[RMDB]
Conditions: 150 mM KOAc, 10 mM MgCl2 and 150 mM bicine (pH 8.5), 24 C. Structure probing data (DMS and 2A3) for a 177-nucleotide construct. The DMS profile rests on 23,545 reads. It was measured as part of the RMDB library OK1LIB. 2A3 adducts were read by reverse transcription with SuperScript II with manganese. DMS adducts were read by reverse transcription with MarathonRT.
RNA sequence: GGGAACGACUCGAGUAGAGUCGAAAAGGGGCUACUACUGGCUCUGCGAGUGAUAGAUGGUUCUCGCCAGUGAACUACGUAGUAGUUGGGGCUAAGUACGUAUAUAAGGUGGUGGCGCCUCGAGAGCCACGUAGGUCUCUUUCGAGAGACCUACGUGAAAAGAAACAACAACAACAAC
Reactivity to DMS in 0.01 (KOAc 150mM, MgCl2 10mM, bicine 150mM(pH8.5), 24C), signal-to-noise 7, nucleotides 027 to 126: g000g010g000g010c040u000a020c030u000a030c030u000g000g010c010u000c020u000g020c010g000a030g020u010g010a130u030a080g010a160u030g010g010u010u010c010u000c010g010c110c160a080g000u010g000a080a100c080u000a010c060g020u010a050g010u000a030g000u020u000g000g000g010g000c040u010a040a090g000u010a040c100g010u010a050u020a120u030a110a120g000g010u010g000g010u010g000g010c050g010c030c010u010c060g010a070g010a120g010c080
Reactivity to 2A3 in 0.01 (KOAc 150mM, MgCl2 10mM, bicine 150mM(pH8.5), 24C), signal-to-noise 9, nucleotides 027 to 126: g020g000g020g000c010u010a010c000u000a000c010u020g030g000c010u000c010u020g020c010g010a010g030u150g090a100u130a280g200a140u180g240g040u160u060c000u010c010g020c040c020a090g060u070g160a080a060c010u020a020c080g110u070a010g010u010a000g000u090u080g020g000g020g000c010u020a060a080g100u060a070c090g070u050a060u030a040u040a180a080g050g020u070g020g040u050g030g020c040g110c030c010u020c000g130a160g000a010g050c020